[RMDB]
This 177-nucleotide RNA was probed chemically with 2A3 and DMS.
Reactivities are rounded to 0.1 and cut off at 0 and 3.
DMS adducts were read by reverse transcription with MarathonRT.
The reactions ran in a buffer of 150 mM KOAc, 10 mM MgCl2 and 150 mM bicine (pH 8.5), at 24 C.
Values cover nucleotides 27 to 126.
The data come from the RNA Mapping Database (RMDB), libraries RFM100 and RFMREP.
RNA sequence: GGGAACGACUCGAGUAGAGUCGAAAACUACUAAGCAGCUUGUGGAAACACAGUUGUGGCCGAGUUAAUAGCCCUGGGUAUAGUAACAAUGUUGAAUAUGACUCUUAAUUGAGGAAAUGGGUGAUCCCUUGGUCUAUGUUUUCGAACAUAGACCAAGAAAAGAAACAACAACAACAAC
Reactivity to 2A3 in 0.01 (KOAc 150mM, MgCl2 10mM, bicine 150mM(pH8.5), 24C), signal-to-noise 5, nucleotides 027 to 126: c000u190a010c020u030a010a010g000c000a000g010c000u230u280g020u010g000g020a010a040a000c000a000c000a010g000u030u010g010u030g010g000c050c040g030a000g010u000u080a060a090u050a130g060c000c040c000u060g020g030g000u130a130u080a220g180u110a090a090c060a130a140u200g050u170u140g090a100a040u130a060u180g090a030c000u000c000u070u110a150a140u300u070g030a020g020g070a080a050a100u100g020g040g020u050g060a140u150c020c000
Reactivity to DMS in 0.01 (KOAc 150mM, MgCl2 10mM, bicine 150mM(pH8.5), 24C), signal-to-noise 7, nucleotides 027 to 126: c010u000a040c060u000a300a280g000c010a020g000c020u000u020g060u000g010g000a170a110a180c020a010c030a020g000u000u010g020u010g010g000c190c300g000a030g000u000u000a080a060u020a170g000c010c010c000u020g000g000g020u010a040u000a060g010u010a070a040c110a090a110u010g010u010u020g000a090a080u010a050u010g010a180c010u000c010u010u010a090a100u020u000g010a030g010g010a060a070a070u010g000g000g010u000g000a080u020c030c050